[RMDB]
Structure probing data (2A3) for a 177-nucleotide construct. The reactions ran in a buffer of 150 mM KOAc, 10 mM MgCl2 and 150 mM bicine (pH 8.5), at 24 C. The 2A3 profile rests on 463 reads.

RNA sequence: GGGAACGACUCGAGUAGAGUCGAAAACAUCAAGAUUCACAAACUUUAAGGCUUGAGUUGGGGUGGUACACGGUCACCUCCUUUACUCGAAAGGUUCCUUAAUUUCUGAUGGGAAUCUUGAUGAUGCUGAUACACCGGCCUUCGGGCCGGUGUAUCAAAAAGAAACAACAACAACAAC
Reactivity to 2A3 in 0.01 (KOAc 150mM, MgCl2 10mM, bicine 150mM(pH8.5), 24C), signal-to-noise 1, nucleotides 027 to 126: c000a000u000c000a010a010g010a010u000u000c000a000c040a130a100a030c030u000u020u020a000a000g110g000c000u040u080g000a000g000u090u000g000g050g010g070u000g020g000u060a030c260a120c090g290g050u090c060a000c000c000u150c000c000u000u100u120a000c000u010c010g040a230a000a000g060g000u170u140c010c000u000u000a000a000u050u060u050c160u090g190a110u010g010g090g000a000a000u000c000u000u000g020a020u000g000a000u040g040c060